RNA sequence: GGGAACGACUCGAGUAGAGUCGAAAACGUAGGGGCUUCUGUCGUAGGAGAGAUGGCGCCAAAUGCAAUCAUAUUGGUUUGGUACUAAUUAUGGUAGAAUUAAAGCUAAGCCAAUUUGGGCACCGGGCACCCCGCAAUGUUUCGACAUUGCGGGGUGAAAAGAAACAACAACAACAAC
Reactivity to DMS in 0.01 (KOAc 150mM, MgCl2 10mM, bicine 150mM(pH8.5), 24C), signal-to-noise 1, nucleotides 027 to 126: c170g060u000a040g000g000g020g140c000u000u020c000u010g010u000c250g030u000a000g040g020a040g010a100g000a130u000g020g000c000g000c040c000a000a060a090u000g000c060a150a270u050c060a040u000a030u010u000g000g050u000u000u010g010g030u000a080c280u000a000a030u060u000a140u020g050g010u000a070g040a160a060u070u000a040a180a300g000c000u000a010a000g000c010c000a020a020u000u000u000g000g020g000c030a050c060c040g000g020g000
Reactivity to 2A3 in 0.01 (KOAc 150mM, MgCl2 10mM, bicine 150mM(pH8.5), 24C), signal-to-noise 2, nucleotides 027 to 126: c060g060u150a090g000g020g020g030c000u050u000c000u040g140u040c000g050u030a120g100g000a040g010a010g010a060u080g060g020c070g010c050c000a050a060a050u080g060c060a040a080u230c000a050u080a050u050u000g000g000u020u000u000g020g000u090a040c090u000a080a080u070u150a130u210g270g000u150a030g110a140a030u060u000a130a000a000g000c010u010a010a010g000c000c000a000a030u020u010u000g010g000g000c060a010c020c050g030g010g010
The record gives the reactivity of an RNA of 177 nucleotides to DMS and 2A3. The DMS profile rests on 1,071 reads. It was measured as part of the RMDB library RFM100. The reactions ran in a buffer of 150 mM KOAc, 10 mM MgCl2 and 150 mM bicine (pH 8.5), at 24 C.